[RMDB]
RNA sequence: GGGAACGACUCGAGUAGAGUCGAAAAUGUGGUUCCUUCGGGAACCACACACUACCGAGAAUGAUCCUCGGUAUAAAAAUCAAACCCUUGGAAACAAGGGAACACUCCCUAGCUUCGGCUAGGGAAAACCAUCAGGUUGAUUCGUCAACCUGAUGGUAAAAGAAACAACAACAACAAC
Reactivity to 2A3 in 0.01 (KOAc 150mM, MgCl2 10mM, bicine 150mM(pH8.5), 24C), signal-to-noise 1, nucleotides 027 to 126: u060g000u000g000g000u010u030c010c000u020u010c120g000g000g000a000a010c060c000a000c000a010c000a000c000u020a000c010c010g000a000g010a030a300u180g050a040u140c010c010u010c000g000g010u020a020u020a000a060a000a010a000u060c090a080a060a300c010c000c000u010u010g010g040a060a080a030c010a010a010g010g000g000a010a000c000a000c040u020c000c000c030u000a000g000c000u030u080c270g100g000c000u000a000g000g000g000a070a000a000
Reactivity to DMS in 0.01 (KOAc 150mM, MgCl2 10mM, bicine 150mM(pH8.5), 24C), signal-to-noise 2, nucleotides 027 to 126: u000g000u000g000g040u000u000c000c000u010u020c160g050g030g010a000a010c000c000a010c000a000c150a120c170u000a010c000c010g020a000g010a100a160u000g000a170u000c130c000u010c000g040g010u000a010u000a010a030a090a050a070u000c210a060a070a120c000c000c000u000u010g000g030a180a090a240c010a000a000g020g000g020a070a040c080a170c180u010c000c000c000u000a000g010c000u000u010c160g020g010c000u000a000g000g020g000a000a040a080